[RMDB]
RNA sequence: GGGAACGACUCGAGUAGAGUCGAAAAUUACGGAUACGAGUGGUUGUGGUGACCGGGCACCCGAGUGAUGUGCCGCCCCCUGAUCGACGGCCCGGUGCGCUCGGCGAUCGCUAAAGUCAGGCAGAUAAGUAACUAGCUACUUCGGUAGCUAGUUACUAAAAGAAACAACAACAACAAC
Reactivity to DMS in 0.01 (KOAc 150mM, MgCl2 10mM, bicine 150mM(pH8.5), 24C), signal-to-noise 2, nucleotides 027 to 126: u000u010a080c060g010g010a080u010a110c100g030a090g020u000g030g010u000u000g020u000g020g010u000g010a070c050c040g000g000g000c030a040c030c030c030g000a160g020u020g000a060u000g020u000g040c030c030g010c020c000c010c090c060u010g000a060u000c040g000a040c100g000g020c010c030c020g000g040u010g010c090g010c040u010c040g010g010c040g010a010u000c060g010c110u000a050a050a140g010u000c060a080g000g020c110a070g000a060u020a040
Structure probing data (DMS) for a 177-nucleotide construct.
The RNA was probed in 150 mM KOAc, 10 mM MgCl2 and 150 mM bicine (pH 8.5) at 24 C.
In probing experiments dimethyl sulfate is read out at A N1 and C N3, which are open when not base-paired.
It was measured as part of the RMDB library OK2TRN.
For DMS, 1,588 sequencing reads were counted.